RNA sequence: GGGAACGACUCGAGUAGAGUCGAAAAGAAGAAAAAGCGUCAAGACGACCUCGCACAGGCUGUGGAGCGAGGUAGCGCAUAAACGCAGAUAGAUUCACAGCCUAAGGACAGAAGAACUGUCCACAAAGGCUAAUCAUUAGUUCGCUAAUGAUUAGCCAAAAGAAACAACAACAACAAC
Reactivity to 2A3 in 0.01 (KOAc 150mM, MgCl2 10mM, bicine 150mM(pH8.5), 24C), signal-to-noise 5, nucleotides 027 to 126: g060a010a030g140a010a080a010a030a040g080c030g030u060c130a150a060g060a090c040g020a010c000c000u000c000g010c000a030c010a040g010g000c000u010g000u010g040g010a030g020c000g000a000g010g010u010a020g030c020g020c020a040u240a060a090a020c000g000c030a000g040a150u170a050g160a080u090u030c000a000c010a000g000c000c000u030a070a030g020g000a000c010a010g030a110a000g060a210a140c020u000g000u000c000c000a000c020a010a030a000
Reactivity to DMS in 0.01 (KOAc 150mM, MgCl2 10mM, bicine 150mM(pH8.5), 24C), signal-to-noise 3, nucleotides 027 to 126: g000a080a120g000a050a090a190a060a090g000c000g000u020c120a100a080g000a200c070g000a230c000c000u000c010g010c010a130c050a150g000g000c030u000g020u000g000g010a000g010c000g000a010g000g020u020a060g010c050g000c050a070u050a070a080a090c000g000c000a110g000a070u030a110g000a150u020u000c010a000c030a000g000c000c000u000a050a160g000g040a000c000a010g000a100a110g060a130a150c010u020g010u000c000c000a050c230a000a110a100